[RMDB]
RNA sequence: GGGAACGACUCGAGUAGAGUCGAAAAAAAUUCCGUGACCGUGUUAGGCCGGCAUUGAAGAGCGUACCUAGCUGCGUUUCAACUUGCGUGGGUUGGGGCGGCUUAGCGGAUUAAGGCGUUGUUCCACCUAAAGAAUGCUGUUCGCAGCAUUCUUUAGAAAAGAAACAACAACAACAAC
Reactivity to DMS in 0.01 (KOAc 150mM, MgCl2 10mM, bicine 150mM(pH8.5), 24C), signal-to-noise 2, nucleotides 027 to 126: a060a040a090u000u000c000c010g020u000g010a130c020c010g010u020g010u000u000a080g010g000c060c010g010g010c040a050u010u010g000a070a130g000a030g030c010g010u000a040c040c130u010a090g030c050u000g030c030g010u000u000u020c020a030a100c090u000u000g000c040g020u020g020g000g010u010u000g000g010g000g020c010g010g000c040u000u010a090g030c030g010g050a090u000u010a090a080g020g000c200g010u010u000g000u000u000c020c020a110c230
Reactivity to 2A3 in 0.01 (KOAc 150mM, MgCl2 10mM, bicine 150mM(pH8.5), 24C), signal-to-noise 2, nucleotides 027 to 126: a000a010a030u060u010c000c000g010u030g050a100c020c000g010u020g170u300u070a070g000g080c000c000g020g030c020a040u050u160g020a070a030g000a010g080c000g000u080a080c010c140u030a020g000c060u000g000c000g040u000u010u200c050a040a050c050u050u090g030c040g080u130g080g000g080u050u020g030g000g020g000c010g050g000c040u020u020a030g010c000g000g030a020u030u090a100a020g080g000c040g010u000u000g000u040u030c010c020a070c000

This 177-nucleotide RNA was probed chemically with DMS and 2A3. For DMS the reverse transcriptase was MarathonRT. It was measured as part of the RMDB library VIROID. The RNA was probed in 150 mM KOAc, 10 mM MgCl2 and 150 mM bicine (pH 8.5) at 24 C. DMS (dimethyl sulfate) methylates the pairing face of unpaired adenines and cytosines. For 2A3 the reverse transcriptase was SuperScript II with manganese.